Conditions: 150 mM KOAc, 10 mM MgCl2 and 150 mM bicine (pH 8.5), 24 C. Structure probing data (DMS and 2A3) for a 177-nucleotide construct. Values are in units of 0.01, from 0 to 300, in steps of 10. For DMS, 3,469 sequencing reads were counted.
RNA sequence: GGGAACGACUCGAGUAGAGUCGAAAAUUCAUAGGAAUCAAGCACUCCCAAAACCAAUGAGUAAUUCUUGCGAUUUACCUAGGGACGUUGACGAAUUGGUUUCUAAAACCAUCGCAGAAUAUUUGGGUAAGACAACGGUUUUCGAACCGUUGUCUUAAAAAGAAACAACAACAACAAC
Reactivity to DMS in 0.01 (KOAc 150mM, MgCl2 10mM, bicine 150mM(pH8.5), 24C), signal-to-noise 3, nucleotides 027 to 126: u000u000c020a110u020a100g000g000a030a010u000c070a160a120g040c290a160c180u010c000c010c020a050a080a160a130c010c020a090a020u010g000a090g020u030a130a060u000u000c010u000u000g000c080g000a020u020u070u020a120c140c080u010a040g010g000g000a040c170g010u010u000g000a150c140g000a110a100u010u020g000g000u010u000u020c050u000a020a030a070a060c120c160a010u000c010g010c060a000g010a010a000u000a040u010u040u000g000g000g000
Reactivity to 2A3 in 0.01 (KOAc 150mM, MgCl2 10mM, bicine 150mM(pH8.5), 24C), signal-to-noise 3, nucleotides 027 to 126: u050u010c100a070u150a110g150g110a030a040u140c050a120a000g150c070a090c050u030c030c020c040a020a090a060a040c060c010a100a090u120g020a050g240u230a150a040u040u010c030u090u110g000c020g020a020u010u000u180a100c040c030u060a040g040g010g040a030c070g070u110u080g100a100c110g080a150a100u130u130g080g000u000u020u060c050u020a050a010a030a050c010c060a030u000c000g000c040a000g000a020a000u070a120u010u030u050g030g000g000